[RMDB]
RNA sequence: GGGAACGACUCGAGUAGAGUCGAAAAGAAAAACUGGUGAAAUUGAAAUAAAGUUGGUAGUUUAGUUAAUAGUAUUGCACUGAUGUUAAUUUCUUUGUUUUGAUAUUCAUACUAUGGCUAUACAAGAUACAGAGGAAGGUGGGUAAAGGGCAUAUGGGUCUAGUGGAUACUUCGGUAUCCACUAGACAAAAGAAACAACAACAACAAC
Reactivity to 2A3 in 0.01 (KOAc 150mM, MgCl2 10mM, bicine 150mM(pH8.5), 24C), signal-to-noise 1, nucleotides 027 to 156: g030a000a010a030a000a030c080u060g000g000u030g070a030a060a080u090u060g070a150a030a070u210a030a090a000g020u040u060g040g030u080a020g010u090u000u000a000g000u000u010a100a010u040a080g010u070a030u090u090g000c000a000c080u010g040a010u060g040u100u090a170a080u150u160u060c020u000u080u000g040u000u030u070u130g110a010u060a100u200u230c070a010u050a150c000u040a080u100g040g010c000u000a000u020a030c000a040a030g050a080u080a100c060a040g030a020g100g030a060a000g000g070u110g000g020g060u100a180a170a130g030g000g010c010a030u010a010u150g180g000